Chemical mapping of a 177-nucleotide RNA with DMS and 2A3.
Conditions: 150 mM KOAc, 10 mM MgCl2 and 150 mM bicine (pH 8.5), 24 C.
For 2A3, 3,188 sequencing reads were counted.
RNA sequence: GGGAACGACUCGAGUAGAGUCGAAAACUCGAAAGAGACCUGCAUAUCUUAGGCAGAUGACCAAGUCCCGUCUGAAAAGCGAAAGCCCUAAGAUAUGCAGCUGUGAUGACUUGUCGCAGAAAAUAAAAAUAUGAGCACGUUUCGACGUGCUCAUAUUAAAAGAAACAACAACAACAAC
Reactivity to DMS in 0.01 (KOAc 150mM, MgCl2 10mM, bicine 150mM(pH8.5), 24C), signal-to-noise 2, nucleotides 027 to 126: c020u000c010g000a090a160a130g000a080g000a130c200c010u000g010c010a000u000a010u000c000u000u000a000g000g000c020a000g010a020u000g010a100c190c050a000a000g010u010c030c300c000g000u000c010u010g000a200a100a110a150g010c020g000a080a130a110g000c000c000c000u000a000a030g000a000u000a000u000g000c000a000g000c010u000g010u000g000a040u010g000a040c000u010u010g010u010c000g040c000a010g000a130a090a010a090u010a020a080a070
Reactivity to 2A3 in 0.01 (KOAc 150mM, MgCl2 10mM, bicine 150mM(pH8.5), 24C), signal-to-noise 3, nucleotides 027 to 126: c010u000c010g040a010a050a010g080a000g060a090c010c000u000g010c000a000u000a000u010c000u000u000a000g010g010c000a000g000a030u020g020a040c030c060a020a010g000u010c040c050c010g020u000c010u000g080a230a240a050a000g020c010g080a100a030a000g020c000c000c000u000a000a000g000a010u000a000u000g000c010a000g000c000u000g000u000g000a020u040g020a040c010u020u090g000u000c000g000c000a010g100a010a100a010a030u290a010a050a000